[RMDB]
RNA sequence: GGGAACGACUCGAGUAGAGUCGAAAAGUCCGGUCCACGAGGCCAAAAUCGAAAGGAAACUGUGAUGGAAGAUAAGCGAUACGAGCCGGAGACCCGGCCAGUCCUGCCCCACACGUUCGGCAGACCGCUCAAGUGCAAGUUUCGACUUGCACUUGAGAAAAGAAACAACAACAACAAC
Reactivity to DMS in 0.01 (KOAc 150mM, MgCl2 10mM, bicine 150mM(pH8.5), 24C), signal-to-noise 2, nucleotides 027 to 126: g050u000c030c050g010g010u010c030c060a110c170g030a140g000g000c050c050a050a050a120a070u020c070g010a060a090a030g020g000a100a070a060c040u010g030u000g000a090u000g000g010a110a080g000a060u000a040a060g010c030g020a130u010a050c070g000a120g010c030c050g050g010a270g000a100c180c010c030g020g000c010c030a080g030u010c070c050u010g000c050c000c010c040a090c090a060c120g000u000u000c050g020g000c040a060g010a100c080c080g000
Reactivity to 2A3 in 0.01 (KOAc 150mM, MgCl2 10mM, bicine 150mM(pH8.5), 24C), signal-to-noise 1, nucleotides 027 to 126: g020u000c010c020g000g000u000c030c020a080c090g030a100g020g000c030c000a030a010a020a120u130c050g030a090a060a070g060g020a100a080a010c070u070g000u040g040a120u090g000g010a030a010g020a090u120a190a020g060c000g030a030u000a050c070g030a040g000c060c030g000g030a090g050a090c070c010c000g020g010c000c010a000g010u010c020c000u060g000c000c000c000c000a030c010a010c060g110u130u080c020g030g000c010a010g060a060c010c030g050
This 177-nucleotide RNA was probed chemically with DMS and 2A3. The 2A3 profile rests on 1,178 reads. The reactions ran in a buffer of 150 mM KOAc, 10 mM MgCl2 and 150 mM bicine (pH 8.5), at 24 C.